An RNA of 177 nucleotides, treated with 2A3 and read out base by base. For 2A3 the reverse transcriptase was SuperScript II with manganese. Conditions: 150 mM KOAc, 10 mM MgCl2 and 150 mM bicine (pH 8.5), 24 C. Reactivities are rounded to 0.1 and cut off at 0 and 3.
RNA sequence: GGGAACGACUCGAGUAGAGUCGAAAAUGGAUGUCCAUUUCCUCAAUGGAAAUCCGGCGGAAUUCAGAGCGUCUCGGAGCUCUUGCACCAUGAGCUGAGCUUCUUCCGUAGAGUCCGCUCCGGCUAGCGUGCGUCGUGGGUUCGCCCACGACGCACGAAAAGAAACAACAACAACAAC
Reactivity to 2A3 in 0.01 (KOAc 150mM, MgCl2 10mM, bicine 150mM(pH8.5), 24C), signal-to-noise 2, nucleotides 027 to 126: u150g000g040a010u080g040u000c000c000a000u100u060u120c020c010u100c080a030a070u040g040g000a050a070a050u030c000c000g000g020c020g010g080a060a080u110u040c040a000g040a030g010c000g000u020c030u010c050g030g000a010g000c000u000c000u030u150g000c010a080c050c120a290u300g140a000g000c000u000g000a000g030c000u000u000c000u050u000c060c010g000u060a020g010a030g000u000c000c000g020c000u000c000c000g040g040c040u090a090g020